[RMDB]
RNA sequence: GGGAACGACUCGAGUAGAGUCGAAAACAGAGCAGACUGUGAGAGGUGGAGGCUGAUACCAGUGAGGAUGCUCCAAGCUGGGACCCAGCCCUGAAGCGGGAGCCCAGAUAAUGGAUGGGUGGAAAUGGGCCUGGAGCCCAGGAGAAGUGGGAGGAUACGAUACUAAAUCCUUCGGGAUUUAGUAUCGAAAAGAAACAACAACAACAAC
Reactivity to 2A3 in 0.01 (KOAc 150mM, MgCl2 10mM, bicine 150mM(pH8.5), 24C), signal-to-noise 2, nucleotides 027 to 156: c020a010g040a020g040c060a010g060a130c040u040g010u060g100a070g010a040g080g000u120g030g020a040g000g010c050u020g000a070u080a120c020c010a000g000u010g050a010g030g000a110u140g070c060u010c060c000a020a040g050c020u010g000g000g000a030c000c020c010a000g030c020c000c010u070g050a090a000g030c050g020g010g030a020g000c000c010c000a010g020a050u200a090a060u140g070g060a040u040g040g040g000u100g030g000a070a090a110u070g010g010g000c010c030u100g070g030a070g020c000c000c000a020g050g010a070g020a080a030g030u110g020g020g010a020g010g000a020u050a160
Reactivity to DMS in 0.01 (KOAc 150mM, MgCl2 10mM, bicine 150mM(pH8.5), 24C), signal-to-noise 1, nucleotides 027 to 156: c060a110g010a180g030c010a040g010a130c020u030g010u000g000a050g030a130g030g060u010g010g010a150g030g040c010u020g000a130u000a040c070c020a000g030u010g000a290g030g010a190u030g010c180u010c000c010a010a280g000c010u000g000g000g000a110c050c060c000a050g000c010c010c060u010g000a100a060g020c050g000g030g030a170g000c050c010c000a090g000a050u000a060a120u020g010g020a090u000g010g000g090u000g030g000a010a090a130u000g020g030g020c000c010u020g000g020a150g020c000c010c000a000g000g010a050g020a030a090g020u010g000g000g010a090g000g010a110u000a120
Chemical mapping of a 207-nucleotide RNA with 2A3 and DMS. For DMS, 2,385 sequencing reads were counted. Conditions: 150 mM KOAc, 10 mM MgCl2 and 150 mM bicine (pH 8.5), 24 C. The 2A3 profile rests on 1,479 reads.